Chemical mapping of a 207-nucleotide RNA with DMS and 2A3. High 2A3 reactivity points to a flexible backbone, as in loops and unpaired stretches. For 2A3, 7,675 sequencing reads were counted. It was measured as part of the RMDB library OK3TST. For DMS the reverse transcriptase was MarathonRT. High DMS reactivity at an A or C suggests that its Watson-Crick edge is free.
RNA sequence: GGGAACGACUCGAGUAGAGUCGAAAAACAACAGAUAGCUGGAACCAGCGUAGAAUUCUACGCAUAUCCAUAGCGAAUGGUACCUGUAAAGAAAAUAAUCGUGGAUGUACAAGUACCAACAGCCGUGGAUGCCAUGGUGAUGUCAAUCACAUAUGCAUAAUCACUGACUAUUCGUAGUCAGUGAUUAAAAAGAAACAACAACAACAAC
Reactivity to DMS in 0.01 (KOAc 150mM, MgCl2 10mM, bicine 150mM(pH8.5), 24C), signal-to-noise 4, nucleotides 027 to 156: a070c050a040a120c040a100g010a110u000a080g030c040u000g030g010a150a150c040c030a110g000c030g010u000a020g010a180a220u000u010c020u000a000c010g020c020a130u010a070u000c010c010a040u000a040g000c000g000a130a300u010g020g030u010a020c000c000u010g020u000a010a060a080g020a200a080a090a120u000a110a130u000c170g020u000g010g010a220u000g000u010a030c000a030a020g010u000a040c020c000a020a070c140a200g000c000c000g060u000g020g010a050u010g020c090c080a090u000g030g020u000g020a080u000g000u000c090a080a080u000c030a060c030a080u000a050u000g040c090a210
Reactivity to 2A3 in 0.01 (KOAc 150mM, MgCl2 10mM, bicine 150mM(pH8.5), 24C), signal-to-noise 8, nucleotides 027 to 156: a000c040a020a000c020a020g080a150u160a060g090c060u060g060g020a070a080c040c030a030g010c000g010u010a010g040a130a300u300u100c010u010a000c010g000c010a010u040a000u080c000c000a000u020a000g010c000g040a070a040u020g000g000u000a000c000c010u000g010u020a050a100a030g160a060a120a050a070u250a060a080u170c130g110u140g080g090a070u120g010u050a000c000a000a020g000u000a010c000c000a010a010c100a060g000c000c000g000u000g000g000a010u030g010c020c020a080u120g030g050u030g010a020u030g110u150c080a090a030u040c010a020c020a050u190a040u120g010c030a030